Structure probing data (2A3 and DMS) for a 177-nucleotide construct.
RNA sequence: GGGAACGACUCGAGUAGAGUCGAAAAGAUAUGGAGUCCCUGUGCAACAAGCUCGAUACUCGGAAACGAGUAUUCGAGUGCACACAUGGGACUCCUAAGUCAAACGCUUAGCGUUCGCGCUAAGCGACAUCUCAAAAUUGUUCGCAAUUUUGAGAUGAAAAGAAACAACAACAACAAC
Reactivity to 2A3 in 0.01 (KOAc 150mM, MgCl2 10mM, bicine 150mM(pH8.5), 24C), signal-to-noise 6, nucleotides 027 to 126: g000a000u040a010u080g000g000a000g000u000c010c000c010u010g010u010g040c170a300a250c050a300a230g050c000u000c000g010a000u000a010c000u000c000g020g000a010a020a010c010g010a000g010u010a010u170u150c010g000a000g000u010g020c050a010c000a000c000a120u300g000g010g000a000c000u000c000c000u000a000a000g000u000c010a040a060a100c030g000c000u000u000a000g000c000g090u050u090c300g020c000g000c120u000a000a000g000c000g000a010
Reactivity to DMS in 0.01 (KOAc 150mM, MgCl2 10mM, bicine 150mM(pH8.5), 24C), signal-to-noise 7, nucleotides 027 to 126: g000a010u000a120u010g000g000a020g020u000c000c000c000u000g020u000g020c040a200a190c300a150a160g000c000u000c000g000a030u000a000c000u000c000g020g000a020a020a060c000g010a020g000u000a000u010u010c020g010a010g040u000g000c190a100c000a020c050a030u020g000g000g010a000c000u000c000c000u000a010a050g000u000c010a130a120a250c030g010c000u000u000a000g010c000g030u010u020c260g030c020g020c000u000a000a010g010c000g010a070
The data come from the RNA Mapping Database (RMDB), library TTRDES. For DMS the reverse transcriptase was MarathonRT. For 2A3 the reverse transcriptase was SuperScript II with manganese.